Structure probing data (2A3 and DMS) for a 177-nucleotide construct.
RNA sequence: GGGAACGACUCGAGUAGAGUCGAAAAAGCCGCCAUACGUGGCGGCAAAGGUCCGGAGAUAGCGAUUACCUAUUUCCGGAGGAGAGAGGGUGGUCGGGCCGCCAUCCACGCCGGUUACGACCGGCGACCUCACUUUUAAUUUCGAUUAAAAGUGAGGAAAAGAAACAACAACAACAAC
Reactivity to 2A3 in 0.01 (KOAc 150mM, MgCl2 10mM, bicine 150mM(pH8.5), 24C), signal-to-noise 8, nucleotides 027 to 126: a000g010c010c010g010c020c000a020u040a070c230g120u030g000g000c000g000g010c000a010a000a010g000g000u010c000c000g000g000a010g000a000u000a000g060c130g190a230u150u300a120c010c000u010a000u000u000u000c000c010g000g000a000g000g000a060g000a010g030a030g010g010g010u030g010g030u060c070g010g020g010c010c010g000c010c000a020u010c010c000a040c010g010c010c010g000g020u050u090a100c230g030a030c060c000g000g000c000g000a010
Reactivity to DMS in 0.01 (KOAc 150mM, MgCl2 10mM, bicine 150mM(pH8.5), 24C), signal-to-noise 4, nucleotides 027 to 126: a190g010c000c010g010c000c010a090u020a110c130g030u000g010g020c010g000g000c000a000a020a080g020g000u000c010c000g000g000a020g000a010u000a000g010c090g020a180u040u070a120c300c000u010a010u000u020u000c000c000g000g020a000g000g010a150g010a110g000a110g000g010g010u010g010g020u000c040g020g000g000c020c020g010c020c020a020u010c010c030a250c050g020c000c010g000g000u000u020a100c220g010a130c020c000g000g000c000g010a020